[RMDB]
RNA sequence: GGGAACGACUCGAGUAGAGUCGAAAAUCGGCCUCAUGGUCGUGUUUUUCGCAGGCUUUGGAUUAUUCAUCUGGAAAGACGCGCACAAGCGGAAAAAACCGUAGGUCUUUCCGGCUACAACGAGCACAAGGGGGAAAGAUUUCGAUCUUUCCCCCUUAAAAGAAACAACAACAACAAC
Reactivity to DMS in 0.01 (KOAc 150mM, MgCl2 10mM, bicine 150mM(pH8.5), 24C), signal-to-noise 2, nucleotides 027 to 126: u010c030g010g000c000c000u040c190a090u080g020g040u000c000g030u000g030u030u010u030u010u000c080g000c190a050g030g000c020u000u000u050g000g030a210u020u010a030u030u000c140a110u000c060u020g000g030a010a030a000g000a060c010g000c120g000c120a140c190a070a150g010c010g040g040a000a080a100a140a100a080c000c000g040u010a210g040g000u000c000u000u000u020c000c000g010g000c130u000a010c100a040a130c060g000a000g000c030a060c140
Reactivity to 2A3 in 0.01 (KOAc 150mM, MgCl2 10mM, bicine 150mM(pH8.5), 24C), signal-to-noise 2, nucleotides 027 to 126: u060c040g000g000c030c000u130c190a190u250g000g000u030c000g040u000g010u050u010u000u030u040c000g000c060a020g000g000c000u000u070u140g050g000a060u100u000a170u260u300c050a130u000c000u030g010g000a000a000a000g000a000c030g030c010g090c300a020c000a160a210g020c080g000g120a010a150a030a050a040a030c000c030g000u050a060g040g000u000c000u000u000u000c000c060g000g000c000u010a080c000a270a000c030g010a040g020c020a070c020